Structure probing data (2A3 and DMS) for a 177-nucleotide construct. 2A3 adducts were read by reverse transcription with SuperScript II with manganese. DMS adducts were read by reverse transcription with MarathonRT. The RNA was probed in 150 mM KOAc, 10 mM MgCl2 and 150 mM bicine (pH 8.5) at 24 C. Reactivities are given for positions 27 through 126.
RNA sequence: GGGAACGACUCGAGUAGAGUCGAAAAGAUGGAGACUUCGGUCUCCAUCAAAACAGGACGUGGAGCCGGCUUCGCGGGGCACGACGAUGACGCCCGGGCCGGAAAUCCUUAGGUUCGCCUAAGGAAAUCCUCAAUAAUUGUUCGCAAUUAUUGAGGAAAAAGAAACAACAACAACAAC
Reactivity to 2A3 in 0.01 (KOAc 150mM, MgCl2 10mM, bicine 150mM(pH8.5), 24C), signal-to-noise 3, nucleotides 027 to 126: g010a000u000g000g000a010g000a010c020u040u080c260g010g000u000c000u060c000c000a000u000c000a010a000a000a010c030a010g080g090a020c040g100u080g050g060a060g100c020c030g030g000c030u250u190c180g100c100g150g000g000g000c000a000c040g270a030c080g290a300u080g070a050c040g220c030c000c070g000g000g020c020c000g000g000a000a000a020u020c010c000u000u000a000g030g010u020u030c200g040c040c000u000a000a000g000g030a010a040a010
Reactivity to DMS in 0.01 (KOAc 150mM, MgCl2 10mM, bicine 150mM(pH8.5), 24C), signal-to-noise 4, nucleotides 027 to 126: g000a010u000g000g000a010g010a020c000u000u010c180g040g000u000c000u000c000c000a000u000c000a020a040a110a110c070a080g010g010a080c100g000u000g000g000a170g010c010c010g010g000c020u000u010c090g020c080g010g010g000g010c020a070c040g010a150c180g000a170u000g000a130c080g010c010c000c010g020g000g000c010c000g010g000a030a060a090u010c000c000u000u000a000g000g010u010u020c230g010c000c000u000a010a010g000g000a020a070a090